[RMDB]
RNA sequence: GGGAACGACUCGAGUAGAGUCGAAAACAUACGGACUUCGGUCCGUAUGAAAGAACCUCAAAUUGACGCAAACUUCCGCGACAUCGCGAGGAAGCGAGGAAAAAAUCGAGGUGUUCGCACCUCGAAACUUUUAUAGUCCCUUCGGGGACUAUAAAAGAAAAGAAACAACAACAACAAC
Reactivity to 2A3 in 0.01 (KOAc 150mM, MgCl2 10mM, bicine 150mM(pH8.5), 24C), signal-to-noise 2, nucleotides 027 to 126: c000a000u010a010c000g000g010a000c010u020u070c180g070g000u010c000c000g010u000a000u000g000a010a000a000g020a050a090c020c000u060c050a080a130a140u200u190g060a080c040g000c090a020a130a140c020u060u030c090c010g110c040g290a300c090a240u300c070g030c020g030a070g060g000a010a030g000c020g000a040g070g000a090a060a030a040a000a050u030c000g010a000g020g010u010g020u040u010c170g000c050a000c010c010u000c000g000a010a000a000
Reactivity to DMS in 0.01 (KOAc 150mM, MgCl2 10mM, bicine 150mM(pH8.5), 24C), signal-to-noise 2, nucleotides 027 to 126: c000a020u000a010c000g010g010a030c000u000u010c190g020g000u010c000c020g020u010a000u000g000a030a080a070g010a130a110c030c010u010c170a060a120a150u010u010g000a150c100g010c080a040a140a160c040u000u000c020c030g010c010g000a230c230a140u010c130g010c020g000a060g010g010a060a130g000c030g000a110g000g000a010a010a010a050a050a090u000c000g010a000g010g020u000g000u000u010c180g000c010a000c000c000u000c020g000a000a030a030
Record summary
Structure probing data (2A3 and DMS) for a 177-nucleotide construct. The RNA was probed in 150 mM KOAc, 10 mM MgCl2 and 150 mM bicine (pH 8.5) at 24 C. It was measured as part of the RMDB library M2PK50. Reactivities are given for positions 27 through 126. For DMS the reverse transcriptase was MarathonRT.